[RMDB]
RNA sequence: GGGAACGACUCGAGUAGAGUCGAAAAUAUCGAAGUCGGCGCUAUUGAAUACCCGUGUAUGGCGUUGCUGACACGGACGAGCACUGCCAUGUCGGGCGGUGUUUCAAGCCCUAGCGUGGGCUAGAAAAGUCUCAGGUCGUUUCGACGAUCUGGGGCUAAAAGAAACAACAACAACAAC
Reactivity to DMS in 0.01 (KOAc 150mM, MgCl2 10mM, bicine 150mM(pH8.5), 24C), signal-to-noise 9, nucleotides 027 to 126: u030a080u020c040g010a090a010g000u000c010g010g000c010g000c010u000a030u000u000g000a080a070u030a100c150c000c000g010u010g020u010a070u010g000g010c030g020u020u050g020c010u000g010a040c030a030c040g000g000a080c150g000a010g010c010a010c010u000g000c000c010a100u030g020u040c210g010g000g010c020g000g010u000g010u000u010u010c030a100a100g000c030c030c030u000a050g010c050g030u010g000g010g000c000u000a060g000a050a070a100
Reactivity to 2A3 in 0.01 (KOAc 150mM, MgCl2 10mM, bicine 150mM(pH8.5), 24C), signal-to-noise 9, nucleotides 027 to 126: u160a020u030c030g030a040a000g000u000c010g060g000c000g000c000u010a010u030u070g040a060a040u060a090c000c000c000g000u010g000u010a220u030g010g000c090g080u030u240g000c010u000g000a010c010a010c020g010g010a010c020g000a000g000c000a000c000u010g000c000c000a040u100g130u120c080g020g000g000c010g010g000u020g000u010u080u030c020a020a000g020c020c000c000u010a010g000c000g020u080g050g010g000c000u000a000g030a010a080a000
The data come from the RNA Mapping Database (RMDB), library OK1LIB. An RNA of 177 nucleotides, treated with DMS and 2A3 and read out base by base. The RNA was probed in 150 mM KOAc, 10 mM MgCl2 and 150 mM bicine (pH 8.5) at 24 C.